[RMDB]
RNA sequence: GGGAACGACUCGAGUAGAGUCGAAAACGCUGGGUACUAGGAGGGCAGGCAACAGCUCUCUGAAGCGCGCACGGAGAGACAUGCCUGCCACCUAGUACCUGUGCUGAAGCGCGCACGGCAACCGAAAGGUGCGAAAACCUCCGUUUCGACGGAGGAACUCUCAUUGAUAGUUCGCUAUCAAUGAGAGAAAAGAAACAACAACAACAAC
Reactivity to 2A3 in 0.01 (KOAc 150mM, MgCl2 10mM, bicine 150mM(pH8.5), 24C), signal-to-noise 3, nucleotides 027 to 156: c030g000c010u030g010g000g000u010a000c000u000a020g040g030a190g040g040g000c010a010g010g000c030a070a030c050a230g040c010u000c000u010c000u020g030a100a040g040c040g000c010g000c030a030c030g010g010a010g010a020g020a100c030a080u110g000c020c000u010g020c020c020a000c000c000u010a000g000u000a000c010c000u010g000u010g000c010u040g010a080a020g020c030g000c000g000c020a010c020g020g030c030a060a030c020c000g070a140a060a000g030g000u020g000c000g000a040a040a050a080c000c000u000c000c010g010u030u080u130c260g070a030c000g000g000a000g000g000a000a010
Reactivity to DMS in 0.01 (KOAc 150mM, MgCl2 10mM, bicine 150mM(pH8.5), 24C), signal-to-noise 1, nucleotides 027 to 156: c020g040c010u000g000g040g000u010a070c010u010a070g050g060a250g000g030g020c010a000g000g000c020a100a060c080a100g000c010u000c000u010c030u000g010a120a060g040c060g020c100g050c040a300c030g020g000a050g070a060g020a060c030a300u010g040c000c000u040g020c010c000a000c000c000u000a030g010u000a000c000c030u010g020u020g010c030u020g010a100a060g000c040g030c030g000c000a220c030g000g030c030a150a180c090c030g010a110a140a120g010g020u010g060c020g000a090a050a100a230c010c000u020c030c000g020u010u010u000c250g040a050c000g030g000a010g030g020a020a020